[RMDB]
RNA sequence: GGGAACGACUCGAGUAGAGUCGAAAAUCGCGGUGAAGAGUUUUUAUAAUUUUGGGGUGAUGUGUUAAAGGGUCAUUCGGGUGUAGUUUAUCUCUAACAUUUCGGCAAAGUUUAUUUAUUUGCCGCGCAGUUAUUAUUAGUUCGCUAAUAAUAACUGAAAAGAAACAACAACAACAAC
Reactivity to DMS in 0.01 (KOAc 150mM, MgCl2 10mM, bicine 150mM(pH8.5), 24C), signal-to-noise 5, nucleotides 027 to 126: u010c040g020c050g000g020u000g010a020a060g000a060g000u010u010u020u030u030a040u030a070a070u010u010u010u010g010g000g000g020u010g000a040u010g010u010g000u000u020a050a060a090g000g000g000u000c080a090u020u010c050g010g000g010u000g010u000a000g010u010u010u010a070u020c020u000c040u010a070a080c090a110u010u030u020c000g010g000c010a010a010a030g010u010u020u020a050u020u040u020a050u010u000u000g010c000c000g000c300g000
Reactivity to 2A3 in 0.01 (KOAc 150mM, MgCl2 10mM, bicine 150mM(pH8.5), 24C), signal-to-noise 1, nucleotides 027 to 126: u090c000g000c000g000g000u000g020a040a000g040a000g000u010u030u040u000u090a140u020a030a050u010u060u040u040g000g000g020g010u040g000a040u030g050u000g000u000u020a060a030a020g000g010g010u000c010a040u010u010c010g010g000g000u010g010u010a000g000u030u000u000a040u020c000u000c000u000a030a010c000a090u010u040u050c000g010g000c010a000a000a000g000u020u110u040a060u030u100u010a050u000u020u000g010c000c000g010c000g000